[RMDB]
This 170-nucleotide RNA was probed chemically with DMS and 2A3. For 2A3, 2,657 sequencing reads were counted.
RNA sequence: GGGAACGACUCGAGUAGAGUCGAAAAUGGAGAUGCCAUGCCGACCCGAAGAGGAAAGAAGGACUCGGACGCGAACCCGUGAGUGGAAACCUCGUUCUUUAUUGGGGAGUACACUCGAGGAGUGGAAAUACGCAGGCCUUCGGGCCUGCGAAAAGAAACAACAACAACAAC
Reactivity to DMS in 0.01 (KOAc 150mM, MgCl2 10mM, bicine 150mM(pH8.5), 24C), signal-to-noise 3, nucleotides 027 to 129: u020g020g000a150g000a170u030g030c090c030a080u030g010c000c000g060a140c070c000c050g080a000a000g020a050g080g010a020a130a030g050a000a000g060g000a080c060u000c050g030g010a040c140g060c020g000a150a130c010c000c000g030u100g000a030g000u000g030g050a040a040a060c000c040u000c200g010u000u030c220u000u020u050a110u020u050g020g020g020g020a030g030u030a110c020a040c030u000c070g000a050g030g000a030g040u100g020g000a070a060a070u030a060
Reactivity to 2A3 in 0.01 (KOAc 150mM, MgCl2 10mM, bicine 150mM(pH8.5), 24C), signal-to-noise 2, nucleotides 027 to 129: u060g000g000a070g010a080u110g000c030c030a000u070g000c000c010g000a000c020c030c000g040a080a030g040a040g050g020a090a000a000g040a020a010g000g020a000c000u000c010g000g000a010c010g020c030g030a030a010c000c000c000g010u040g010a000g010u030g000g000a010a010a010c040c000u030c020g040u130u000c010u090u150u170a220u090u130g000g000g000g000a000g000u000a000c020a000c030u050c000g020a100g040g000a000g010u000g040g050a040a040a000u110a020
Conditions: 150 mM KOAc, 10 mM MgCl2 and 150 mM bicine (pH 8.5), 24 C. Source: RMDB library 15KLIB, as collected in RNAgym.